Description: The record gives the reactivity of an RNA of 207 nucleotides to 2A3 and DMS. Values are in units of 0.01, from 0 to 300, in steps of 10. For DMS the reverse transcriptase was MarathonRT. It was measured as part of the RMDB library OK3TST.
RNA sequence: GGGAACGACUCGAGUAGAGUCGAAAACGUAUGCGAAAGCAUACGCGUAUGCGAAAGCAUACGUAGGCGGGAGAACCAGACAAACGCCCGUAUACACGCUUAAAAGUGUAUACGAUUAGCACAUGUGCGACUUAAAGCACAUGAUGCAAGUCUGGGAUAUAUAUGUAUAUUUCGAUAUACAUAUAUAAAAAGAAACAACAACAACAAC
Reactivity to 2A3 in 0.01 (KOAc 150mM, MgCl2 10mM, bicine 150mM(pH8.5), 24C), signal-to-noise 5, nucleotides 027 to 156: c010g000u000a000u000g000c010g060a100a020a010g000c000a000u000a000c010g000c010g010u000a000u000g010c010g050a130a010a030g000c000a010u000a000c000g000u030a030g010g000c010g000g040g010a080g010a090a090c000c000a000g000a010c010a010a090a010c000g000c000c000c000g000u000a000u000a000c000a000c000g050c080u220u300a070a120a100a050g000u010g000u000a000u000a000c000g000a010u030u160a020g000c000a000c000a000u000g010u000g010c010g080a090c170u190u300a130a080a010g000c000a000c000a000u000g010a010u010g000c010a020a030g000u010c000u010g000g000g010a000
Reactivity to DMS in 0.01 (KOAc 150mM, MgCl2 10mM, bicine 150mM(pH8.5), 24C), signal-to-noise 4, nucleotides 027 to 156: c050g020u000a000u000g010c000g000a140a130a300g010c010a010u000a010c000g010c040g020u010a000u000g000c000g000a210a160a300g030c000a000u000a000c020g030u000a030g020g020c010g030g000g000a290g010a130a090c010c000a010g020a030c000a080a130a180c010g010c020c010c000g000u000a000u000a010c000a010c010g010c170u010u000a080a120a080a110g010u000g000u000a000u000a000c000g000a090u000u000a060g020c020a060c010a010u000g020u000g010c000g010a130c190u000u010a140a110a300g010c000a010c000a000u000g000a050u000g010c000a090a090g000u000c000u000g010g000g000a140